An RNA of 177 nucleotides, treated with 2A3 and read out base by base.
RNA sequence: GGGAACGACUCGAGUAGAGUCGAAAACAUGCCAUUAUCAUCAACAAGAGCACUAACAUUUCCAAAAGAAUUCUUCAGCCAAUCGUUCAAGAAGUGAGGCCUAGGACUAGGUUCUCGUUGAGAAUCACGUCGAAUUCGUGUUCGCACGAAUUCGACGAAAAGAAACAACAACAACAAC
Reactivity to 2A3 in 0.01 (KOAc 150mM, MgCl2 10mM, bicine 150mM(pH8.5), 24C), signal-to-noise 2, nucleotides 027 to 126: c040a070u190g000c050c000a130u150u130a060u130c080a070u010c000a000a080c010a100a000g000a010g030c000a000c070u070a040a030c030a140u150u110u130c000c000a010a010a010a010g000a000a200u200u050c070u020u140c020a010g020c000c000a080a060u000c020g060u100u090c120a100a030g010a180a000g100u120g040a060g000g000c000c010u020a070g030g050a030c010u050a020g000g090u030u050c030u000c030g110u020u120g040a000g020a000a040u020c000a010